[RMDB]
Chemical mapping of a 177-nucleotide RNA with 2A3 and DMS. The 2A3 profile rests on 18,118 reads. 2A3 adducts were read by reverse transcription with SuperScript II with manganese. The reactions ran in a buffer of 150 mM KOAc, 10 mM MgCl2 and 150 mM bicine (pH 8.5), at 24 C. The DMS profile rests on 8,005 reads.

RNA sequence: GGGAACGACUCGAGUAGAGUCGAAAAGAUAUGGAUCGUGAACUACGCUUGAAGUAAGCUUUGAUCUCAUUUAGCUCGGAAACGAGCUAAAUGAGGGAGCUUAUGGAGGAGCGCACGAUCCUAAGUCCGAGUUAUUUAAGUUCGCUUAAAUAACUCGAAAAGAAACAACAACAACAAC
Reactivity to 2A3 in 0.01 (KOAc 150mM, MgCl2 10mM, bicine 150mM(pH8.5), 24C), signal-to-noise 6, nucleotides 027 to 126: g070a060u140a040u210g000g000a000u010c010g000u020g040a180a160c150u200a060c300g020c000u040u100g020a070a010g020u020a010a000g010c000u300u220u150g120a140u070c000u000c010a000u010u000u010a000g000c000u000c000g020g030a090a110a080c000g020a000g010c000u000a000a000a010u000g000a010g000g020g010a010g000c010u000u010a010u030g000g060a160g160g200a010g010c010g000c000a000c010g000a000u000c000c010u010a080a010g010u040c050
Reactivity to DMS in 0.01 (KOAc 150mM, MgCl2 10mM, bicine 150mM(pH8.5), 24C), signal-to-noise 6, nucleotides 027 to 126: g000a120u000a300u010g000g000a000u000c000g030u010g010a140a120c210u020a300c020g020c010u000u000g000a300a290g010u000a010a000g000c010u020u000u010g000a070u010c000u000c000a010u000u000u000a010g010c000u010c000g000g000a120a110a180c010g010a000g010c000u000a000a000a000u000g000a010g000g010g000a010g010c000u000u000a010u000g010g010a300g020g000a010g010c030g000c010a010c010g000a020u000c000c000u000a020a070g010u010c040